[RMDB]
The record gives the reactivity of an RNA of 177 nucleotides to DMS.
The DMS profile rests on 1,502 reads.
RNA sequence: GGGAACGACUCGAGUAGAGUCGAAAAGAAUGCACGGCCUGUUGUUUACAGGAGCUUUAAAAAUUUCUCCAGCUUUGGAUGAACUUUUCUUUUGAAGCAAGCUGGUAUAUGAGAUACGGCCUAGUAGACCGUACUUUCAAUUCGUUGAAAGUACGGUAAAAGAAACAACAACAACAAC
Reactivity to DMS in 0.01 (KOAc 150mM, MgCl2 10mM, bicine 150mM(pH8.5), 24C), signal-to-noise 2, nucleotides 027 to 126: g000a170a090u000g000c040a090c260g000g040c010c020u000g010u000u000g020u000u000u000a080c020a020g010g040a300g000c040u000u000u010a000a040a040a070a070u000u000u000c030u000c000c000a050g010c200u000u010u010g020g010a040u010g000a030a030c280u010u010u020u000c140u010u000u000u000g010a040a020g000c040a050a090g010c010u000g000g000u010a060u000a080u020g000a100g000a040u000a030c140g020g000c000c010u000a200g000u000a090g000

Reactivities are given for positions 27 through 126. For DMS the reverse transcriptase was MarathonRT. Conditions: 150 mM KOAc, 10 mM MgCl2 and 150 mM bicine (pH 8.5), 24 C. The data come from the RNA Mapping Database (RMDB), library OK2TRN. High DMS reactivity at an A or C suggests that its Watson-Crick edge is free.